[RMDB]
Source: RMDB library TTRINS, as collected in RNAgym. Structure probing data (2A3 and DMS) for a 177-nucleotide construct. High DMS reactivity at an A or C suggests that its Watson-Crick edge is free. For 2A3, 2,699 sequencing reads were counted. Reactivities are given for positions 27 through 126.
RNA sequence: GGGAACGACUCGAGUAGAGUCGAAAAGAUAUGGACGACUAGAGCAACAGCGACCUACAAUCCGUAACAUCUGGUCGGAAACGACCAGUGGGAUUGUAGGUCGACAUGCUCGAUGUCGUCCUAAGUCGUGUCUAGUGUAGUUCGCUACACUAGACACAAAAGAAACAACAACAACAAC
Reactivity to 2A3 in 0.01 (KOAc 150mM, MgCl2 10mM, bicine 150mM(pH8.5), 24C), signal-to-noise 1, nucleotides 027 to 126: g050a020u140a080u300g010g000a000c000g010a000c000u000a000g000a000g020c020a010a180c070a250g070c040g000a000c010c000u000a020c010a010a000u050c020c020g160u170a090a040c040a300u090c020u010g000g000u010c010g020g040a090a080a020c040g020a000c150c010a020g010u000g000g000g000a000u020u020g000u000a000g020g000u000c000g000a020c000a000u010g010c000u000c010g000a000u000g010u000c000g000u000c000c010u020a010a000g010u020c010
Reactivity to DMS in 0.01 (KOAc 150mM, MgCl2 10mM, bicine 150mM(pH8.5), 24C), signal-to-noise 2, nucleotides 027 to 126: g020a100u000a300u000g000g030a050c000g000a010c000u000a300g000a000g020c000a010a080c300a230g010c010g000a020c000c000u000a010c020a010a000u000c000c000g010u000a030a170c180a080u000c000u000g000g020u000c000g000g020a060a130a230c000g000a010c020c000a000g010u000g000g010g010a000u010u010g010u000a000g000g010u000c000g000a000c070a190u020g000c010u000c000g010a070u010g000u000c000g040u000c000c000u000a020a080g010u000c110